[RMDB]
RNA sequence: GGGAACGACUCGAGUAGAGUCGAAAAACGAGGCGCGUACGCGCGCCUCGAGCAGCAAGGAAGGCAGGGGUCCUAAGGUGUGUCCUCCUGCCCUCCUUGCUGUAGUGGCCUCAUACGUGAGGCCACAACAUACACACGGUUUCGACCGUGUGUAUGUAAAAGAAACAACAACAACAAC
Reactivity to DMS in 0.01 (KOAc 150mM, MgCl2 10mM, bicine 150mM(pH8.5), 24C), signal-to-noise 3, nucleotides 027 to 126: a140c010g030a010g010g020c000g040c010g020u020a060c240g010c050g040c000g010c010c000u000c010g000a040g000c010a020g020c010a010a000g000g000a010a040g000g000c010a010g000g000g000g010u000c010c020u010a130a210g030g030u010g000u020g000u000c030c000u020c000c000u000g000c000c000c010u000c000c000u000u000g000c000u010g000u000a020g010u010g010g000c000c020u000c000a060u010a140c190g010u000g010a010g010g000c000c000a000c000a100
Reactivity to 2A3 in 0.01 (KOAc 150mM, MgCl2 10mM, bicine 150mM(pH8.5), 24C), signal-to-noise 7, nucleotides 027 to 126: a000c030g000a000g010g000c000g020c010g030u050a050c270g010c000g000c000g010c130c000u000c000g000a010g000c000a000g000c000a000a010g000g010a010a010g010g000c020a000g000g010g000g000u020c020c000u140a180a120g260g060u170g050u100g020u090c010c020u090c000c000u010g000c000c000c000u000c000c000u000u000g000c000u000g000u000a000g000u010g000g000c000c000u010c000a040u040a060c300g090u050g010a000g010g010c000c000a000c000a000
This 177-nucleotide RNA was probed chemically with DMS and 2A3.
The reactions ran in a buffer of 150 mM KOAc, 10 mM MgCl2 and 150 mM bicine (pH 8.5), at 24 C.